[RMDB]
RNA sequence: GGGAACGACUCGAGUAGAGUCGAAAAUUAAGAAAUAUGCACGACAGUAUGAUGAACAUGCUAUUGUUCAAGAACAAGAAAAUUGUUCUAUUGCGGUUGGUCGUUCACCGGAUGGUUUUCGUCAAUUAACUUAUGUGAAUAACAUUCAUACUAAGAACCCCUAUUCUAGCUUCGGCUAGAAUAGGGGAAAAGAAACAACAACAACAAC
Reactivity to 2A3 in 0.01 (KOAc 150mM, MgCl2 10mM, bicine 150mM(pH8.5), 24C), signal-to-noise 1, nucleotides 027 to 156: u170u020a020a000g190a060a050a040u190a090u200g020c030a000c100g140a020c020a000g190u190a090u100g090a140u090g020a020a000c000a000u140g070c050u030a060u270u110g010u050u020c000a000a010g000a060a000c000a000a020g300a130a190a280a220u050u050g000u000u000c000u100a150u000u060g070c050g010g000u040u110g010g000u110c020g030u030u000c050a170c070c000g000g100a020u050g000g010u000u000u090u090c030g000u050c030a130a090u110u110a050a000c000u040u040a020u020g000u000g020a050a000u140a030a030c000a030u020u020c000a000u030a140c020u030a050a040g000a060a060
Chemical mapping of a 207-nucleotide RNA with 2A3. The reactions ran in a buffer of 150 mM KOAc, 10 mM MgCl2 and 150 mM bicine (pH 8.5), at 24 C.